[RMDB]
RNA sequence: GGGAACGACUCGAGUAGAGUCGAAAACUAGAAGGAUAUUAGUCUCGGUCCUGUAUUCUCAAGGGAACUCCACGGAAAACUGCCAGACUACCAUUACAGGAGACGUUAUGUUCAGCUUAAUCCUCUAGGUCCUAUCAUCGUUCGCGAUGAUAGGACCAAAAGAAACAACAACAACAAC
Reactivity to 2A3 in 0.01 (KOAc 150mM, MgCl2 10mM, bicine 150mM(pH8.5), 24C), signal-to-noise 1, nucleotides 027 to 126: c000u000a040g010a010a060g000g000a010u070a170u300u160a000g010u060c000u000c100g030g000u060c000c010u000g000u000a040u090u090c160u050c000a000a020g000g080g000a010a000c030u000c020c000a040c000g110g000a000a090a090a090c050u060g030c000c050a010g000a090c000u040a040c010c010a070u140u060a120c000a070g010g000a000g060a050c000g070u090u170a000u120g100u020u100c000a000g000c030u110u180a000a010u000c010c000u100c000u000a050